[RMDB]
Structure probing data (DMS) for a 207-nucleotide construct. Source: RMDB library OK3TST, as collected in RNAgym. The DMS profile rests on 1,369 reads. The RNA was probed in 150 mM KOAc, 10 mM MgCl2 and 150 mM bicine (pH 8.5) at 24 C.
RNA sequence: GGGAACGACUCGAGUAGAGUCGAAAAACUAUUCUCACCAGACCUCCUAGGCGACCCAGACAAUUAUACCCUAGCCAACCCCUUAAACACCCCUCCCCACAUCAAGCCCGAAUGAUAUUUCCUAUUCGCCUACACAAUUCUCCGAUCCGUCCCAAAAAUGGUAAAUGAGGUUCGCCUCAUUUACCAUAAAAGAAACAACAACAACAAC
Reactivity to DMS in 0.01 (KOAc 150mM, MgCl2 10mM, bicine 150mM(pH8.5), 24C), signal-to-noise 1, nucleotides 027 to 156: a170c060u000a120u000u000c020u000c010a110c100c010a230g000a140c030c020u000c040c040u030a160g010g000c110g040a090c140c030c010a120g080a130c000a110a120u010u000a110u000a050c040c010c030u000a110g000c070c030a110a140c060c000c000c010u000u020a000a040a140c070a200c030c000c030c000u000c020c010c040c020a100c080a030u010c040a050a120g020c030c020c010g020a040a080u020g010a120u010a080u000u000u010c030c010u010a170u010u000c040g020c040c000u000a050c070a090c040a040a140u000u010c010u000c010c030g010a040u000c030c010g040u000c010c000c040a030a060a100a100